[RMDB]
The data come from the RNA Mapping Database (RMDB), library OK3TST.
Structure probing data (DMS and 2A3) for a 207-nucleotide construct.
The 2A3 profile rests on 2,190 reads.
Values are in units of 0.01, from 0 to 300, in steps of 10.
Reactivities are given for positions 27 through 156.
The DMS profile rests on 3,339 reads.
High DMS reactivity at an A or C suggests that its Watson-Crick edge is free.
The reactions ran in a buffer of 150 mM KOAc, 10 mM MgCl2 and 150 mM bicine (pH 8.5), at 24 C.
As a SHAPE reagent, 2A3 marks flexible, mostly unpaired nucleotides at the ribose 2'-OH.
RNA sequence: GGGAACGACUCGAGUAGAGUCGAAAAGCAAAGGAUCUAGAUCUAGAUGACUACUUUGACCAGUGGUAUGCGGAGAACAUCGGCGGCAGCGACGAAAUCAGCCCCGGUCAGGGCCUUGUCGCGUUCUCGUCGUUGUUCGCGGUGAUGGUCCUCGUCGCGGACAAAGACGAUUCGUCGUCUUUGUCCGAAAAGAAACAACAACAACAAC
Reactivity to DMS in 0.01 (KOAc 150mM, MgCl2 10mM, bicine 150mM(pH8.5), 24C), signal-to-noise 1, nucleotides 027 to 156: g030c080a110a100a080g000g020a090u000c020u000a080g000a170u000c080u000a050g000a070u020g010a100c030u000a070c050u000u000u000g010a120c020c050a170g000u000g020g030u000a060u010g000c000g010g030a210g020a040a020c020a030u000c020g010g020c030g030g010c090a030g020c040g020a050c030g000a030a100a150u000c080a090g000c010c000c010c010g000g010u010c120a150g010g030g000c010c220u000u010g030u010c030g040c000g000u000u000c000u000c020g030u010c020g000u000u000g010u000u010c040g020c020g020g000u020g020a140u000g020g000u000c000c020u000c010g020u010c060g030
Reactivity to 2A3 in 0.01 (KOAc 150mM, MgCl2 10mM, bicine 150mM(pH8.5), 24C), signal-to-noise 3, nucleotides 027 to 156: g040c060a100a060a050g010g000a000u000c020u060a040g020a190u030c030u060a070g020a180u190g030a020c000u030a010c000u090u100u160g040a010c020c040a020g020u020g000g010u110a060u110g110c070g060g040a040g000a040a010c010a000u010c020g080g010c000g010g020c030a030g000c000g010a020c010g060a030a010a110u130c040a020g000c000c010c020c040g030g060u060c050a030g020g000g000c030c030u100u140g050u080c050g010c050g050u050u040c080u030c030g000u000c000g000u000u010g010u030u120c000g000c000g010g000u020g020a020u060g000g010u010c000c010u030c030g110u030c050g000